RNA sequence: GGGAACGACUCGAGUAGAGUCGAAAACGGGGUACGAGGGAUUGCUUAAGAACUAAGGUUAAGCAGUUAAAUACCCAUAGACGACCUUAGAUAGAAGGACAGAGAUCCUUCUGUCCCUCGUUGUCAAGGUACACGUAGAUUUCGAUCUAUGUGUACCAAAAGAAACAACAACAACAAC
Reactivity to 2A3 in 0.01 (KOAc 150mM, MgCl2 10mM, bicine 150mM(pH8.5), 24C), signal-to-noise 6, nucleotides 027 to 126: c040g020g020g000g030u040a000c010g010a020g010g030g010a020u020u060g070c040u110u210a100a020g060a130a050c030u040a050a020g080g010u050u020a140a010g040c010a020g010u030u050a070a070a040u160a090c010c000c000a020u090a010g060a020c040g010a010c000c000u010u000a010g000a020u050a010g010a020a000g000g000a010c130a090g300a120g010a300u000c000c000u000u000c000u000g000u000c010c000c010u030c020g000u010u050g050u030c040a000a030